The data come from the RNA Mapping Database (RMDB), library OK1LIB. Chemical mapping of a 177-nucleotide RNA with 2A3 and DMS. Reactivities are given for positions 27 through 126. The 2A3 profile rests on 1,455 reads. The reactions ran in a buffer of 150 mM KOAc, 10 mM MgCl2 and 150 mM bicine (pH 8.5), at 24 C.

[RMDB]
RNA sequence: GGGAACGACUCGAGUAGAGUCGAAAACGUCAGAUGACGAAGUCGGUCCAUCUGCGGUAAAAGACCGACAUAGAGUUCGAAGCAGAACGCACAACCGCAGAAACACGAUUGGAGUGUGAAUGAGAGACAUCCGUCCCGUAUUCGUACGGGACGGAUGAAAAGAAACAACAACAACAAC
Reactivity to 2A3 in 0.01 (KOAc 150mM, MgCl2 10mM, bicine 150mM(pH8.5), 24C), signal-to-noise 3, nucleotides 027 to 126: c040g020u060c020a040g060a300u180g040a120c010g000a130a000g010u020c000g000g000u050c080c000a080u010c010u000g010c000g000g030u010a020a030a000a030g000a000c000c000g000a030c020a030u220a000g100a000g000u060u000c040g020a080a020g090c040a030g030a050a000c010g100c020a050c040a020a010c000c000g000c000a000g010a010a070a000c090a020c030g170a070u120u170g050g090a150g000u050g000u010g040a050a140u220g030a130g000a020g000a050
Reactivity to DMS in 0.01 (KOAc 150mM, MgCl2 10mM, bicine 150mM(pH8.5), 24C), signal-to-noise 3, nucleotides 027 to 126: c020g000u000c010a180g030a070u020g030a000c000g000a090a120g020u000c000g030g000u020c020c170a160u010c010u000g010c000g000g010u000a060a080a110a240g000a010c040c000g000a010c000a090u000a090g000a080g000u030u000c010g000a090a170g000c140a070g000a000a000c020g020c220a070c140a130a090c030c020g030c020a000g000a250a170a050c150a020c040g000a180u000u020g000g010a280g010u000g000u040g000a050a050u000g000a190g020a080g020a150